[RMDB]
RNA sequence: GGGAACGACUCGAGUAGAGUCGAAAAGAUACUGCUGAUGGCACGCUGGCACGUGCCCAGGGACCGACAAAUGAAAAACGGUGUCCCAGCAAGACGCUGCUGAUCCCUGUGCUGUAUGAUGCCGUAGGCUGCGAGGACGAUUCGUCGUCCUCGCAGCAAAAGAAACAACAACAACAAC
Reactivity to 2A3 in 0.01 (KOAc 150mM, MgCl2 10mM, bicine 150mM(pH8.5), 24C), signal-to-noise 2, nucleotides 027 to 126: g010a040u080a060c020u050g040c000u040g040a190u100g080g000c010a000c010g020c030u080g070g000c090a000c040g000u010g000c000c000c000a010g010g000g020a020c000c070g070a090c070a100a150a080u220g130a070a040a040a000a000c030g040g000u040g030u030c020c040c000a030g000c010a010a010g070a050c030g000c000u010g000c020u050g040a090u030c000c000c000u020g020u040g000c020u020g040u050a060u050g100a060u060g030c020c010g070u040a060g070
Reactivity to DMS in 0.01 (KOAc 150mM, MgCl2 10mM, bicine 150mM(pH8.5), 24C), signal-to-noise 2, nucleotides 027 to 126: g020a120u010a060c030u000g000c010u010g020a110u030g030g000c010a000c020g010c040u010g030g010c100a210c010g010u010g010c010c000c010a040g000g000g010a030c080c000g020a110c140a060a080a080u010g000a060a030a060a050a150c080g010g000u000g020u000c000c140c000a060g000c110a110a100g000a020c120g000c040u000g000c050u020g000a060u000c000c010c000u000g000u010g030c040u000g010u010a030u020g000a100u000g010c020c010g010u000a080g050